The record gives the reactivity of an RNA of 177 nucleotides to DMS and 2A3. The 2A3 profile rests on 2,700 reads. Conditions: 150 mM KOAc, 10 mM MgCl2 and 150 mM bicine (pH 8.5), 24 C.
RNA sequence: GGGAACGACUCGAGUAGAGUCGAAAAGCUCACCGCCGUUGGGUUCCUGCCGGAACCGGUAGACAUCCACCGCGCCAGCCCUGAUAUCGGGCCGGUGCUCUUGGCGCAUCGGCAGGCGCCGGUCCUGUAGUAAUGCUUUCUUCGGAAAGCAUUACUAAAAAGAAACAACAACAACAAC
Reactivity to DMS in 0.01 (KOAc 150mM, MgCl2 10mM, bicine 150mM(pH8.5), 24C), signal-to-noise 4, nucleotides 027 to 126: g010c050u000c060a130c140c090g010c020c040g000u000u010g020g000g000u010u000c050c010u000g010c090c030g010g020a100a080c160c030g030g020u000a040g000a100c070a030u000c010c010a050c120c060g010c030g000c020c020a080g010c050c010c010u000g000a150u010a100u010c140g020g000g020c010c010g000g000u000g000c000u000c030u000u000g010g010c050g020c060a070u010c060g010g010c010a140g000g020c030g020c010c000g000g000u000c010c010u010g000
Reactivity to 2A3 in 0.01 (KOAc 150mM, MgCl2 10mM, bicine 150mM(pH8.5), 24C), signal-to-noise 2, nucleotides 027 to 126: g030c020u010c060a040c040c070g030c020c010g080u060u030g050g000g020u040u010c000c000u020g030c000c020g150g090a300a160c170c000g010g010u010a020g010a010c020a010u000c030c010a020c040c020g000c010g000c010c010a030g010c010c000c030u080g100a090u060a100u300c080g000g010g000c010c000g010g000u010g000c010u010c030u050u060g020g010c030g020c000a080u140c030g020g000c000a020g020g010c010g010c010c000g010g000u020c000c000u010g040